[RMDB]
RNA sequence: GGGAACGACUCGAGUAGAGUCGAAAAUGCUGCAGUUCAUUGACCGGCAGGUAGAUGCGGCCGCGCCGCGCGUCGUCGCCGACGUCGCGGAUGAUGUUGGUGAGCUGGAACGCCAGUCCCAGCUUGAAUGACUGCGACCGUUCGCGGUCGCAGUCAUAAAAGAAACAACAACAACAAC
Reactivity to DMS in 0.01 (KOAc 150mM, MgCl2 10mM, bicine 150mM(pH8.5), 24C), signal-to-noise 1, nucleotides 027 to 126: u000g010c010u000g010c030a070g000u000u010c090a100u020u000g010a060c040c050g020g000c050a060g030g040u010a140g010a140u000g010c070g000g000c020c010g040c020g020c070c010g030c000g010c050g010u000c000g020u000c300g030c300c020g000a020c000g020u000c010g030c070g020g040a070u000g020a090u000g010u000u110g020g000u010g000a020g000c010u000g000g010a070a030c070g010c150c130a200g000u000c010c000c000a000g000c040u000u000g000a070